[RMDB]
Structure probing data (DMS and 2A3) for a 177-nucleotide construct.
RNA sequence: GGGAACGACUCGAGUAGAGUCGAAAAGAUAUGGAAAGCCUUGAGCACGCCAGUCGGAAACGACUGCGUGCAAUGAUGGGCCUUCCUAAGUCAAACGUACCCGAACGGUUCGCCGUUCGGGUACGAACAUUAACUUUAUCUUCGGAUAAAGUUAAUGAAAAGAAACAACAACAACAAC
Reactivity to DMS in 0.01 (KOAc 150mM, MgCl2 10mM, bicine 150mM(pH8.5), 24C), signal-to-noise 3, nucleotides 027 to 126: g000a030u000a230u000g000g010a020a000a100g000c000c000u000u000g000a070g020c000a000c000g010c200c160a020g000u000c010g010g000a060a060a110c020g010a010c000u000g000c010g030u010g000c000a080a070u010g000a110u000g000g000g000c000c030u000u000c000c000u000a030a110g000u000c020a100a140a270c000g020u000a010c000c000c020g000a010a010c000g000g020u000u010c240g010c000c000g000u000u000c000g010g000g000u000a000c010g000a030a130
Reactivity to 2A3 in 0.01 (KOAc 150mM, MgCl2 10mM, bicine 150mM(pH8.5), 24C), signal-to-noise 2, nucleotides 027 to 126: g010a020u060a020u080g000g000a020a000a020g000c010c000u030u020g030a010g000c000a000c020g070c200c150a010g000u000c010g030g000a060a030a020c000g020a010c010u020g010c000g000u000g000c000a000a050u010g000a000u020g010g000g000c000c000u000u020c000c000u000a120a020g070u020c030a120a050a090c020g010u010a000c000c010c020g030a020a000c020g000g100u100u170c300g030c140c030g000u030u000c010g010g000g000u000a000c000g000a000a000
2A3 adducts were read by reverse transcription with SuperScript II with manganese. Reactivities are given for positions 27 through 126. Conditions: 150 mM KOAc, 10 mM MgCl2 and 150 mM bicine (pH 8.5), 24 C. The 2A3 profile rests on 7,915 reads. Reactivities are rounded to 0.1 and cut off at 0 and 3.